[RMDB]
RNA sequence: GGGAACGACUCGAGUAGAGUCGAAAACGAAAGGAUGGGUCCCAUCCGAAACGUACGGCAAGCUUGGAUGGGAAAGCAUGCGGCACAACAUGAAGCCAUCCGAAACGUACGUUAGCGGCUCUAAGUUCUUGGCGCCAGAUACUUGGAUGGGAAAGCAACUAACCAAGUCGUUCGCGACUUGGUUAGUAAAAGAAACAACAACAACAAC
Reactivity to 2A3 in 0.01 (KOAc 150mM, MgCl2 10mM, bicine 150mM(pH8.5), 24C), signal-to-noise 3, nucleotides 027 to 156: c050g020a020a050a020g160g050a050u140g010g020g130u060c000c000c000a000u000c000c010g020a050a020a000c000g000u000a000c000g010g070c190a170a000g010c060u170u130g000g000a030u000g000g000g000a050a040a050g110c030a020u020g030c080g230g040c170a040c030a180a080c000a010u010g000a040a000g210c000c000a000u000c000c010g000a040a040a000c000g000u000a000c000g010u000u010a030g050c010g020g000c000u010c010u050a070a170g030u260u020c080u110u070g020g010c020g000c030c000a010g020a050u160a110c110u130u180g030g000a000u000g050g030g070a010a000a010g090c020a000
Reactivity to DMS in 0.01 (KOAc 150mM, MgCl2 10mM, bicine 150mM(pH8.5), 24C), signal-to-noise 1, nucleotides 027 to 156: c060g000a100a100a100g020g020a180u000g030g000g000u000c010c040c010a030u000c000c010g020a030a000a070c000g010u010a050c020g030g010c130a110a080g010c080u000u010g000g000a050u000g000g010g000a060a060a130g030c050a010u010g030c000g060g000c140a160c080a070a040c020a030u000g000a110a250g010c000c000a000u020c000c000g000a010a110a020c010g000u000a030c050g010u000u000a050g000c050g020g070c010u000c070u000a070a130g000u030u000c080u000u000g030g000c050g040c020c050a160g010a180u000a010c110u000u010g010g000a060u000g010g020g020a050a020a120g050c040a190